Chemical mapping of a 207-nucleotide RNA with 2A3. Conditions: 150 mM KOAc, 10 mM MgCl2 and 150 mM bicine (pH 8.5), 24 C. 2A3 adducts were read by reverse transcription with SuperScript II with manganese.

RNA sequence: GGGAACGACUCGAGUAGAGUCGAAAAAGAAAUUCGAUUUAAGGGUUAAGCAGUACGAGCCCGGGAUGCGGUUCGGAGUUCAAGGGCCCCUGGCCAUCUGGCAGUACUUUGUUCACCCUUCAUUGGUUCACUGGUUUUACAACGCCUAUGAAAACGAGAGAAUUAGAGGUUUCGACCUCUAAUUCUCAAAAGAAACAACAACAACAAC
Reactivity to 2A3 in 0.01 (KOAc 150mM, MgCl2 10mM, bicine 150mM(pH8.5), 24C), signal-to-noise 1, nucleotides 027 to 156: a000g100a010a140a010u110u060c020g090a040u120u120u120a010a000g030g000g010u040u030a060a020g000c010a000g000u010a020c010g010a030g010c020c060c040g030g050g000a050u080g000c040g020g000u050u090c010g000g020a080g040u190u130c170a070a010g120g100g000c050c070c030c010u040g100g000c020c010a010u010c090u090g000g000c000a000g000u000a010c000u000u060u110g070u020u100c040a020c000c000c000u010u000c010a010u010u070g020g060u070u070c030a020c100u070g020g110u030u030u070u200a040c030a040a010c040g100c070c000u120a060u130g010a020a110a010a060c110g110a070